[RMDB]
RNA sequence: GGGAACGACUCGAGUAGAGUCGAAAAGUGAUUCAUGCAGCCUAGCCCCUACCUCUUAAUUCCGUCAAUACUAUCUCAGAUUUUCAUUGAAGAACUGGUCCGGAAUUAUUGAAUCAUCAGCUAGAAAGCCGAGGAUGCUAUUCGUAGCAUCCUCGGCAAAAGAAACAACAACAACAAC
Reactivity to 2A3 in 0.01 (KOAc 150mM, MgCl2 10mM, bicine 150mM(pH8.5), 24C), signal-to-noise 2, nucleotides 027 to 126: g090u070g000a070u150u070c020a050u250g080c000a000g050c000c020u000a050g000c010c000c010c010u050a050c010c020u020c030u000u010a000a000u000u040c050c010g000u000c060a010a060u120a250c100u010a010u100c000u040c060a040g110a300u240u150u130u060c080a050u090u280g020a080a100g000a070a040c030u020g000g000u040c000c000g000g020a000a000u020u050a000u060u060g100a010a000u010c020a000u080c170a050g000c000u090a000g000a100a060a020
Description
Structure probing data (2A3) for a 177-nucleotide construct. It was measured as part of the RMDB library OK1LIB. The RNA was probed in 150 mM KOAc, 10 mM MgCl2 and 150 mM bicine (pH 8.5) at 24 C.